[RMDB]
RNA sequence: GGGAACGACUCGAGUAGAGUCGAAAAGCAUUCGUGCAACCGGGCUCGCGCCCUACCGGAAAUACAACCAUAUCCACGUGUGCUAGGAUAUGGCCGGUCCCACCGAAACAGCACACGGGACAACCUAUGUAGUAGAUGUGUUCGCACAUCUACUACAAAAAGAAACAACAACAACAAC
Reactivity to DMS in 0.01 (KOAc 150mM, MgCl2 10mM, bicine 150mM(pH8.5), 24C), signal-to-noise 3, nucleotides 027 to 126: g000c000a080u000u070c130g000u000g010c000a190a040c200c070g000g000g050c030u000c140g010c230g070c020c000c010u000a030c010c010g000g000a100a100a050u060a080c240a190a300c010c000a030u000a020u030c000c040a040c160g000u010g000u010g000c030u000a120g000g000a000u000a000u000g000g000c070c010g000g000u010c000c000c000a030c120c200g020a150a050a010c250a050g000c000a040c010a010c000g000g000g010a040c060a000a180c100c090u040a160
Reactivity to 2A3 in 0.01 (KOAc 150mM, MgCl2 10mM, bicine 150mM(pH8.5), 24C), signal-to-noise 3, nucleotides 027 to 126: g000c000a050u050u060c090g020u020g020c000a020a040c030c010g000g010g000c030u050c110g120c020g020c030c000c000u010a020c000c000g000g040a010a050a050u210a030c040a030a000c030c000a000u000a010u020c000c000a050c050g010u030g000u010g010c030u050a030g000g000a000u000a000u020g010g000c000c010g000g010u010c000c000c000a000c010c030g080a110a070a000c050a060g000c000a010c000a010c000g010g010g000a020c030a030a100c030c020u050a060